[RMDB]
RNA sequence: GGGAACGACUCGAGUAGAGUCGAAAAGAUUGACCUUAACUAUGAGUUUAGUAAGCUCAAUGAUGCGUUACGGAAGGCUAAGAAGGAUAGUGUUGAGUAUGCUAAGGUUAAAAAGAUCUUGCGUCAACAUGCAAAACUCCUUCGGGAGUUUUGCAUGAAAAGAAACAACAACAACAAC
Reactivity to DMS in 0.01 (KOAc 150mM, MgCl2 10mM, bicine 150mM(pH8.5), 24C), signal-to-noise 1, nucleotides 027 to 126: g000a050u010u000g000a080c100c020u010u010a070a090c070u000a070u000g030a070g010u000u000u020a040g010u000a200a160g040c020u000c010a020a110u000g000a090u010g000c040g020u030u000a050c060g000g000a100a080g030g000c060u000a030a120g000a180a090g000g000a070u000a030g000u000g000u000u000g020a050g010u010a070u000g020c000u000a050a000g000g010u000u010a070a060a060a100a040g000a050u010c010u000u000g040c090g030u000c110a030a140